[RMDB]
RNA sequence: GGGAACGACUCGAGUAGAGUCGAAAAGCUAUUGUGAAUAGCGCUAUGACAAGCAUAUGAGUGCAGGUAUCUUUUUGAUAGAAUAACUUAUUUUCCUUUGGGUAGAUACCCAGUAGUGGGAUUGCUGUGAUUACUAAUCGUUCGCGAUUAGUAAUCAAAAAGAAACAACAACAACAAC
Reactivity to 2A3 in 0.01 (KOAc 150mM, MgCl2 10mM, bicine 150mM(pH8.5), 24C), signal-to-noise 9, nucleotides 027 to 126: g010c020u020a020u050u160g140u120g190a100a030u050a050g010c010g010c050u050a040u090g050a050c050a100a020g020c030a040u050a050u200g060a040g030u050g010c040a030g050g050u030a040u030c020u030u140u070u080u130g080a060u070a090g080a090a070u130a090a040c050u110u120a090u140u110u030u060c010c000u060u080u050g030g000g010u040a070g040a110u090a070c000c000c010a010g020u060a010g030u070g030g060g080a110u040u070g020c030u050g020
Reactivity to DMS in 0.01 (KOAc 150mM, MgCl2 10mM, bicine 150mM(pH8.5), 24C), signal-to-noise 8, nucleotides 027 to 126: g010c010u000a010u010u010g020u030g020a090a060u010a030g010c010g020c050u000a030u010g010a120c120a090a060g000c030a050u010a070u020g000a040g000u000g000c050a130g000g000u000a010u000c000u000u000u020u020u000g010a020u010a050g010a060a040u010a110a110c160u020u020a090u020u000u000u000c000c030u000u010u010g000g000g020u000a050g000a070u010a050c000c000c020a050g000u010a030g010u000g010g010g000a100u010u010g000c030u000g010

This 177-nucleotide RNA was probed chemically with 2A3 and DMS.
The RNA was probed in 150 mM KOAc, 10 mM MgCl2 and 150 mM bicine (pH 8.5) at 24 C.
As a SHAPE reagent, 2A3 marks flexible, mostly unpaired nucleotides at the ribose 2'-OH.
Values are in units of 0.01, from 0 to 300, in steps of 10.
For DMS, 35,122 sequencing reads were counted.
2A3 adducts were read by reverse transcription with SuperScript II with manganese.